[RMDB]
RNA sequence: GGGAACGACUCGAGUAGAGUCGAAAAGGAUCCUAAGUAGUCCGGGUAACUGCCUCGAGAUCAGUUACCAGUGAGGACUACACAAUUUGACAUAGAUCUCGAGGAUGUCGGGUUGAGAAUAGGAUCGCUACACCUAUGUAUUCGUACAUAGGUGUAGAAAAGAAACAACAACAACAAC
Reactivity to DMS in 0.01 (KOAc 150mM, MgCl2 10mM, bicine 150mM(pH8.5), 24C), signal-to-noise 9, nucleotides 027 to 126: g010g000a010u000c000c000u000a030a160g010u000a010g010u000c000c000g010g010g010u000a010a010c010u000g000c130c030u000c220g010a160g010a120u000c010a020g000u000u000a010c020c010a140g010u010g010a150g000g000a020c000u000a000c010a020c020a020a020u000u000u000g000a010c010a020u000a060g010a090u000c030u000c040g010a110g010g010a010u000g000u000c010g000g000g000u000u000g010a160g010a130a250u000a010g010g010a010u000c000g010
Reactivity to 2A3 in 0.01 (KOAc 150mM, MgCl2 10mM, bicine 150mM(pH8.5), 24C), signal-to-noise 7, nucleotides 027 to 126: g010g000a000u000c000c000u020a090a020g010u000a000g000u010c000c010g050g000g000u000a000a000c000u010g020c010c040u060c110g160a140g010a140u080c000a000g000u000u000a010c000c030a010g080u030g100a110g000g010a000c000u010a000c000a000c000a000a010u000u000u030g000a000c000a000u020a030g120a150u030c030u000c040g040a050g100g040a010u000g000u000c000g010g000g000u010u010g060a060g100a110a070u020a020g000g000a000u000c000g000

Chemical mapping of a 177-nucleotide RNA with DMS and 2A3. DMS adducts were read by reverse transcription with MarathonRT. The 2A3 profile rests on 24,903 reads.